The record gives the reactivity of an RNA of 177 nucleotides to DMS and 2A3. Reactivities are given for positions 27 through 126. It was measured as part of the RMDB library OK2TST. DMS adducts were read by reverse transcription with MarathonRT. Conditions: 150 mM KOAc, 10 mM MgCl2 and 150 mM bicine (pH 8.5), 24 C. Values are in units of 0.01, from 0 to 300, in steps of 10. The 2A3 profile rests on 1,742 reads.

RNA sequence: GGGAACGACUCGAGUAGAGUCGAAAACGACGUGAUCGGCGCCAUACUUUUCGGUAACAUAGGCGACCACUUCAUCCCGACGGUCGUCGUUAAAGUCGAUAUCAAAGUCGGGCAUGCUGACGCGCUCGUCAUCACCCGUUUUCGAACGGGUGAUGACAAAAGAAACAACAACAACAAC
Reactivity to DMS in 0.01 (KOAc 150mM, MgCl2 10mM, bicine 150mM(pH8.5), 24C), signal-to-noise 2, nucleotides 027 to 126: c040g000a030c010g010u020g000a110u000c000g000g040c000g030c010c000a050u000a050c020u010u000u000u000c040g020g000u010a110a120c160a140u000a200g020g010c000g000a000c000c000a090c070u000u010c210a130u030c040c000c000g040a170c180g000g010u010c000g020u000c010g000u000u000a090a140a140g030u000c020g000a050u000a070u000c190a050a040a010g000u000c070g020g000g010c050a010u000g020c020u010g000a010c030g020c030g020c120u000c040
Reactivity to 2A3 in 0.01 (KOAc 150mM, MgCl2 10mM, bicine 150mM(pH8.5), 24C), signal-to-noise 2, nucleotides 027 to 126: c010g050a020c010g020u020g010a300u010c030g010g010c000g000c010c000a030u030a030c000u050u110u050u070c040g040g000u060a080a000c040a100u120a100g010g030c000g000a010c010c000a000c010u120u130c040a120u090c000c010c010g000a040c020g000g030u000c010g000u030c020g020u010u190a100a000a000g010u020c020g010a020u010a050u290c120a040a010a010g000u030c010g000g000g000c050a050u250g000c010u030g000a010c010g020c000g000c090u000c060